[RMDB]
RNA sequence: GGGAACGACUCGAGUAGAGUCGAAAAAAGAUAUGGACGGUCUCUAGCGUGAGCUAUGAAGUGGGUGUAUGUACACUCGGAAACGAGUGUACGAAGCCCAUGGAGCUUCGGGCCGUCCUAAGUCAAACGCUGAACAUAUCUUCGGAUAUGUUCAGCGAAAAGAAACAACAACAACAAC
Reactivity to DMS in 0.01 (KOAc 150mM, MgCl2 10mM, bicine 150mM(pH8.5), 24C), signal-to-noise 1, nucleotides 027 to 126: a090a100g000a050u010a210u010g000g000a060c000g010g010u000c000u010c300u000a090g000c040g070u000g040a100g000c010u000a250u010g000a100a200g010u000g000g010g010u000g010u010a300u010g000u010a000c000a010c000u010c000g000g010a090a030a080c000g000a030g000u000g000u000a000c000g020a080a300g000c000c000c000a040u000g000g010a060g010c070u000u000c120g000g000g000c000c010g000u000c000c010u000a000a060g000u000c040a030a050a150
Reactivity to 2A3 in 0.01 (KOAc 150mM, MgCl2 10mM, bicine 150mM(pH8.5), 24C), signal-to-noise 1, nucleotides 027 to 126: a000a050g010a010u020a030u160g000g000a040c000g000g000u030c040u010c090u300a110g070c020g290u300g070a010g000c000u080a300u300g000a040a000g030u030g000g000g000u190g040u080a070u300g010u000a000c000a000c000u000c000g000g010a010a010a000c020g000a020g020u000g000u000a000c000g000a010a000g040c030c020c000a000u020g000g000a010g000c000u040u070c030g020g000g010c030c000g040u020c000c000u000a010a000g000u000c000a020a030a090